[RMDB]
RNA sequence: GGGAACGACUCGAGUAGAGUCGAAAAGAUAUGGAUCAUCCGUUUGGACAUCGAUCGUUGCUCGGAAACGAGCAACGGGAGUCCGAACGGAGUGAUCCUAAGUCAAACUUGGUGUUCGCACCAAGAACGUCAAAAUCAUCUUCGGAUGAUUUUGACGAAAAGAAACAACAACAACAAC
Reactivity to DMS in 0.01 (KOAc 150mM, MgCl2 10mM, bicine 150mM(pH8.5), 24C), signal-to-noise 1, nucleotides 027 to 126: g000a060u000a300u000g010g040a000u020c000a030u000c000c000g030u010u000u010g000g000a000c010a300u000c190g000a080u020c000g020u000u000g010c000u000c000g000g010a100a080a260c010g010a000g000c030a000a000c000g010g000g000a010g070u000c010c010g010a010a010c000g000g000a000g040u000g000a010u000c000c000u010a050a090g030u000c040a130a100a270c000u000u000g000g030u000g000u010u010c300g020c010a010c000c000a020a040g010a170a200
Reactivity to 2A3 in 0.01 (KOAc 150mM, MgCl2 10mM, bicine 150mM(pH8.5), 24C), signal-to-noise 1, nucleotides 027 to 126: g010a020u110a050u200g010g000a000u000c020a000u000c020c000g000u000u030u020g010g040a070c080a300u300c130g110a080u070c000g000u020u000g000c010u000c000g000g020a060a140a110c030g040a030g050c050a000a000c000g000g000g000a000g000u000c010c020g000a010a000c000g040g040a000g000u010g000a000u000c000c000u000a080a040g020u030c050a160a080a020c000u010u020g000g080u100g050u060u110c300g020c090a000c000c000a030a000g070a050a060